[RMDB]
RNA sequence: GGGAACGACUCGAGUAGAGUCGAAAAUGUUUGGCGAUGCGGACGCGCCAGAGGCACGCGACGGCGACCUCGCCGCCCACGUCUCCGAACAGUUCCGUGCGAAACUCGACACGGAACUCGAGACCGCGCAUGCGCGGUCAUUCGUGACCGCGCAUGCAAAAGAAACAACAACAACAAC
Reactivity to DMS in 0.01 (KOAc 150mM, MgCl2 10mM, bicine 150mM(pH8.5), 24C), signal-to-noise 3, nucleotides 027 to 126: u010g010u010u010u000g020g010c070g010a010u000g050c050g010g000a060c020g010c170g000c000c090a090g010a010g000g000c060a110c040g000c050g010a100c300g020g010c020g010a240c100c150u000c010g000c010c000g030c010c000c010a070c040g020u000c000u000c020c110g000a000a050c040a020g000u000u000c000c000g010u010g000c020g020a120a170a090c250u000c040g010a070c010a010c000g000g000a000a010c010u000c140g000a090g010a190c020c040g000c100
Reactivity to 2A3 in 0.01 (KOAc 150mM, MgCl2 10mM, bicine 150mM(pH8.5), 24C), signal-to-noise 3, nucleotides 027 to 126: u080g010u020u030u030g000g000c020g000a030u050g010c020g010g010a000c030g090c050g040c050c040a030g010a020g020g010c170a100c300g020c030g100a130c140g170g000c000g010a050c030c020u030c020g000c010c000g010c000c000c000a010c050g000u000c010u000c010c030g020a020a010c000a010g000u000u000c000c010g000u000g000c000g070a260a260a300c100u040c060g130a110c040a000c000g010g000a000a000c010u000c030g120a110g040a050c020c030g070c010

About this RNA: This 177-nucleotide RNA was probed chemically with DMS and 2A3. It was measured as part of the RMDB library OK2TRN. For DMS the reverse transcriptase was MarathonRT. For DMS, 1,696 sequencing reads were counted.